[RMDB]
RNA sequence: GGGAACGACUCGAGUAGAGUCGAAAAAAGCUUAAUGCCCUCUUUGUACGAUGGUGUCACUCUAAAAUUAUUUAGGUAAUUUAAUUGGAUGUGAUAUCAAGCACUAGUUUUGUUUGGAGGAGCAGAGCGAGUGCACUUAUUUCGAUAAGUGCACUCGAAAAGAAACAACAACAACAAC
Reactivity to 2A3 in 0.01 (KOAc 150mM, MgCl2 10mM, bicine 150mM(pH8.5), 24C), signal-to-noise 5, nucleotides 027 to 126: a010a010g100c090u080u080a100a010u080g000c000c010c000u000c010u030u180u110g070u070a050c040g090a150u110g000g000u000g000u000c010a000c000u000c010u040a020a030a010a030u020u020a030u040u080u080a140g090g040u040a030a030u010u010u070a080a140u090u080g040g000a080u180g040u000g000a010u010a000u020c000a030a010g030c030a040c050u050a120g100u100u110u030u190g140u060u070u130g020g000a000g000g010a040g030c010a010g020a000g020
Reactivity to DMS in 0.01 (KOAc 150mM, MgCl2 10mM, bicine 150mM(pH8.5), 24C), signal-to-noise 4, nucleotides 027 to 126: a080a030g000c060u000u010a070a100u010g010c000c000c000u000c010u000u010u000g010u010a030c050g000a190u030g000g000u000g000u010c000a000c010u010c000u000a020a030a010a010u000u000a000u000u000u030a120g030g000u000a010a000u000u000u010a060a130u020u010g010g000a020u020g020u010g010a010u000a000u000c000a060a170g020c060a020c050u010a070g010u020u000u010u020g000u010u000u010g000g000a020g000g000a130g030c010a020g010a090g000